RNA sequence: GGGAACGACUCGAGUAGAGUCGAAAAGCGCACGCUCUCUACGUCCGCGAGAAGGUCGCCGCGGCGCUCGCGAUUCUGGACGGCCGAGAGUUCGUGACCGACGACGACUGGUGGCUGUCCGCGGCGGUCCUGUCCAUGUCGUUGAUGACGCGCGACGAUCGUCGUACAAGUUCGCUUGUACGACGAUAAAAGAAACAACAACAACAAC
Reactivity to 2A3 in 0.01 (KOAc 150mM, MgCl2 10mM, bicine 150mM(pH8.5), 24C), signal-to-noise 2, nucleotides 027 to 156: g020c010g000c000a020c000g000c030u020c000u000c030u090a000c000g000u000c030c090g000c030g030a000g000a120a170g120g030u070c040g000c070c020g030c000g000g040c020g000c000u000c000g010c000g120a160u300u020c160u300g040g020a030c000g080g040c150c160g040a050g010a000g020u020u060c000g030u040g050a100c040c000g020a000c000g000a000c000g000a000c000u060g030g110u130g020g000c040u080g030u140c010c000g000c000g000g000c040g000g000u090c000c030u110g200u080c000c030a030u180g000u030c000g000u000u080g180a170u130g040a090c180g010c010g050c000g000a020c050g090